[RMDB]
RNA sequence: GGGAACGACUCGAGUAGAGUCGAAAAGAUAUGGAUUGUUCCAGCUAGUCCGGUGUCGGAAACGACACUGGACUUGGACCUGGACAAUCCUAAGUCAAACGGCUCUAAUGUUCGCAUUAGAGCCGAACACCUUGAUAAGCUUCGGCUUAUCAAGGUGAAAAGAAACAACAACAACAAC
Reactivity to 2A3 in 0.01 (KOAc 150mM, MgCl2 10mM, bicine 150mM(pH8.5), 24C), signal-to-noise 1, nucleotides 027 to 126: g010a010u040a000u150g000g000a000u000u020g100u300u140c020c010a010g080c120u150a000g010u000c000c000g000g000u010g000u020c010g020g070a060a070a050c010g010a000c000a000c010u000g050g010a000c000u000u030g010g000a040c050c000u010g000g010a000c000a010a000u020c000c000u000a080a020g060u010c020a070a080a110c060g000g000c000u000c000u030a010a010u010g040u080u050c300g040c170a000u010u000a010g040a000g000c000c020g000a000a000
Reactivity to DMS in 0.01 (KOAc 150mM, MgCl2 10mM, bicine 150mM(pH8.5), 24C), signal-to-noise 2, nucleotides 027 to 126: g000a050u000a300u010g000g000a020u000u000g010u010u000c000c000a040g000c080u000a010g010u000c000c000g010g020u010g020u010c010g010g000a110a070a220c000g030a010c010a000c000u000g010g000a000c000u000u000g030g020a110c300c010u030g000g010a050c000a020a010u010c000c000u000a020a070g000u000c020a150a160a300c010g010g000c020u020c000u000a000a000u000g010u000u010c290g000c010a000u000u010a010g000a010g010c010c000g000a020a050